[RMDB]
RNA sequence: GGGAACGACUCGAGUAGAGUCGAAAAAGUUGGCUCACAACAUUACUGCACAAAGAAUGGAGUUGGAUUUCUCAACGAAUAUCUGGGGAGCUGGGAUGGGAACUUUUACUAAUUGUGCAACAAUUGGUCAUAGGGAAAGCUUCGGCUUUCCCUAUGAAAAAGAAACAACAACAACAAC
Reactivity to DMS in 0.01 (KOAc 150mM, MgCl2 10mM, bicine 150mM(pH8.5), 24C), signal-to-noise 2, nucleotides 027 to 126: a110g010u000u000g020g000c090u010c090a100c110a060a150c060a070u010u000a120c090u010g000c020a090c060a030a040a070g040a120a170u000g010g010a070g040u000u000g020g000a140u000u020u000c030u000c110a060a100c160g020a070a110u000a040u000c070u010g020g010g020g030a110g070c160u010g000g000g000a050u010g000g000g000a060a020c060u000u010u010u000a090c060u000a040a040u000u000g010u000g020c080a060a080c060a000a040u010u000g010g010